[RMDB]
RNA sequence: GGGAACGACUCGAGUAGAGUCGAAAAUGAAGGUUCGCCUUCAGUUGUUCCGUAGGAAAUCAAACAGUGAUGACCAUACGUAACAUCAUCUUCGAAAGAGGAUGUGGUAUGCAAGCUGGUAGAUUUCCUAAACGGGUGACACGAGAUUCGUCUCGAAAUAUCUACACGUUUUCGAACGUGUAGAUAUAAAAGAAACAACAACAACAAC
Reactivity to DMS in 0.01 (KOAc 150mM, MgCl2 10mM, bicine 150mM(pH8.5), 24C), signal-to-noise 5, nucleotides 027 to 156: u000g020a040a020g010g020u000u000c220g020c010c020u010u000c010a100g000u000u000g020u000u010c000c000g040u000a060g000g010a030a010a020u010c010a120a150a290c020a030g010u000g020a100u010g000a190c300c030a040u020a020c010g020u000a100a070c040a050u000c010a010u000c010u000u000c060g010a200a180a300g010a020g040g010a020u000g020u000g010g000u000a000u000g010c030a070a300g010c010u010g010g020u000a300g010a020u000u000u010c000c000u000a010a030a080c040g000g010g010u000g000a090c080a160c030g010a120g000a130u000u000c130g010u010c020u000c000g000a100a140
Reactivity to 2A3 in 0.01 (KOAc 150mM, MgCl2 10mM, bicine 150mM(pH8.5), 24C), signal-to-noise 7, nucleotides 027 to 156: u090g010a010a010g080g010u100u220c260g170c020c000u010u000c020a030g000u020u030g020u110u110c000c000g000u020a020g000g020a000a000a010u010c010a140a290a110c010a010g020u030g070a230u150g050a070c100c010a000u010a010c030g110u150a040a140c020a060u120c000a000u000c010u070u050c090g190a250a110a070g000a000g000g010a000u000g000u010g010g000u000a000u020g030c030a040a140g000c000u010g000g000u020a010g000a000u000u010u000c000c000u000a020a010a010c000g010g030g050u130g080a020c040a010c170g000a020g000a010u070u160c230g090u000c130u000c000g020a100a130
Description: This 207-nucleotide RNA was probed chemically with DMS and 2A3. Reactivities are given for positions 27 through 156. The DMS profile rests on 12,231 reads. High DMS reactivity at an A or C suggests that its Watson-Crick edge is free. For 2A3 the reverse transcriptase was SuperScript II with manganese. Reactivities are rounded to 0.1 and cut off at 0 and 3. Conditions: 150 mM KOAc, 10 mM MgCl2 and 150 mM bicine (pH 8.5), 24 C.